[RMDB]
RNA sequence: GGGAACGACUCGAGUAGAGUCGAAAAGUAAGUGGAAGUAACUAAAGCGAAUAUCAGGCCGAUAUUGCCAAAAUGAGGCGGGAAUUGGGUCACCGGACAGCAGUCCGUAAGAGAUAAAUUUCCCACCCAAAUCCAUGGGUUUCGACCCAUGGAUUUGAAAAGAAACAACAACAACAAC
Reactivity to DMS in 0.01 (KOAc 150mM, MgCl2 10mM, bicine 150mM(pH8.5), 24C), signal-to-noise 3, nucleotides 027 to 126: g010u010a070a090g030u000g000g010a110a090g010u000a050a080c090u020a070a130a080g010c050g000a060a050u000a040u000c030a160g020g020c150c060g000a040u000a030u000u000g000c000c060a040a070a050a100u010g010a090g000g020c080g010g010g000a050a040u000u010g010g010g000u000c030a080c120c010g010g010a020c030a170g000c170a110g000u000c020c010g010u010a030a080g010a160g010a040u000a020a040a070u000u000u000c000c000c010a080c090c080
Reactivity to 2A3 in 0.01 (KOAc 150mM, MgCl2 10mM, bicine 150mM(pH8.5), 24C), signal-to-noise 1, nucleotides 027 to 126: g050u050a080a020g040u040g080g060a000a080g050u080a060a020c050u050a140a000a060g050c060g050a050a000u040a010u080c050a050g100g090c020c000g020a040u010a040u020u040g030c000c030a010a030a000a210u100g040a110g060g020c000g000g000g000a010a010u040u020g140g020g030u010c000a000c090c000g020g000a000c010a080g150c060a020g060u010c010c000g020u020a030a030g050a030g010a060u060a040a120a050u020u030u060c020c010c010a030c000c010